[RMDB]
Background:
Source: RMDB library OK2TST, as collected in RNAgym. Structure probing data (2A3 and DMS) for a 177-nucleotide construct. For DMS, 1,126 sequencing reads were counted.
RNA sequence: GGGAACGACUCGAGUAGAGUCGAAAACUGGAGGCACUACCAGAUGAAGUGCGAAAGACCAUUCGCCAGGGUAAUACUUGACAACGAUGAUGGUGAGGAGGCGAAAGUGAUGGUGCAGGUCGACGCGGGCGACCUCAGUAUUCGUACUGAGGUCGCCAAAAGAAACAACAACAACAAC
Reactivity to 2A3 in 0.01 (KOAc 150mM, MgCl2 10mM, bicine 150mM(pH8.5), 24C), signal-to-noise 1, nucleotides 027 to 126: c030u030g040g040a040g100g030c010a000c040u030a030c000c010a040g010a130u120g000a130a000g060u050g050c050g030a050a010a010g120a010c000c000a040u040u000c020g000c000c000a010g000g110g000u030a110a060u030a120c010u090u030g080a070c070a130a010c100g070a070u190g000a020u050g010g050u120g030a070g020g060a040g010g010c070g030a010a020a050g100u130g100a100u010g010g050u060g020c050a030g080g000u040c000g020a050c040g000c090g030
Reactivity to DMS in 0.01 (KOAc 150mM, MgCl2 10mM, bicine 150mM(pH8.5), 24C), signal-to-noise 2, nucleotides 027 to 126: c030u010g020g000a140g010g000c000a070c030u040a220c020c000a090g020a150u010g020a090a110g030u020g000c000g020a070a100a120g000a090c090c040a240u000u000c050g000c010c040a070g000g000g020u010a020a040u000a110c050u020u000g000a060c080a070a110c090g000a100u010g000a100u000g050g020u000g010a100g010g010a120g000g010c070g000a040a020a080g020u000g040a060u030g030g010u010g030c060a080g030g020u030c040g000a100c060g010c120g000